Source: RMDB library OK2TST, as collected in RNAgym. An RNA of 177 nucleotides, treated with DMS and read out base by base. The reactions ran in a buffer of 150 mM KOAc, 10 mM MgCl2 and 150 mM bicine (pH 8.5), at 24 C. The DMS profile rests on 1,639 reads.
[RMDB]
RNA sequence: GGGAACGACUCGAGUAGAGUCGAAAAGUGCAUCCUCGCCAAGGCAUCCUCCACCACCCCCUGGACGCUCCGCCCGUUCGGUUGUCGUUGCCAGCCCACGAAGUCCGUACCGUCGUAGGCGAGUACCCUACGGGGGUGGAUUCGUCCACCCCCGUAGAAAAGAAACAACAACAACAAC
Reactivity to DMS in 0.01 (KOAc 150mM, MgCl2 10mM, bicine 150mM(pH8.5), 24C), signal-to-noise 2, nucleotides 027 to 126: g000u010g020c090a160u000c030c020u000c040g030c030c060a070a130g010g000c060a080u000c000c050u000c050c020a090c030c070a240c050c010c020c030c020u000g000g000a080c040g030c180u000c030c030g010c040c030c050g000u000u000c050g010g000u000u000g010u010c030g030u020u000g000c020c030a120g020c050c030c050a040c050g010a090a090g030u010c050c050g020u000a050c050c040g000u000c040g030u020a080g000g030c040g010a080g000u000a100c090c070